[RMDB]
Notes: Structure probing data (DMS) for a 177-nucleotide construct.
RNA sequence: GGGAACGACUCGAGUAGAGUCGAAAAUGUUGCUGAGGAGGAGGCUACCUCUGGCCUUGUUAUGCUUUGCAUUCACGGGUCACCUGUGAAUUCUUACACCAAUACACCUUACACCGGUGCUCUUGGCAAGUUGGGGCAUUUUCGAAUGCCCCAACUUAAAAGAAACAACAACAACAAC
Reactivity to DMS in 0.01 (KOAc 150mM, MgCl2 10mM, bicine 150mM(pH8.5), 24C), signal-to-noise 1, nucleotides 027 to 126: u010g010u020u000g000c020u010g000a060g010g020a300g010g000a060g000g000c080u000a060c050c070u010c070u000g010g040c010c000u020u000g020u030u010a020u000g010c100u000u020u010g040c150a040u000u000c050a030c040g000g010g000u040c230a080c040c010u000g010u000g020a020a030u000u000c060u000u010a040c150a150c040c040a050a000u010a100c030a020c020c020u000u000a140c260a130c260c100g010g020u000g030c090u010c030u010u000g000g000c190
The RNA was probed in 150 mM KOAc, 10 mM MgCl2 and 150 mM bicine (pH 8.5) at 24 C. The DMS profile rests on 793 reads.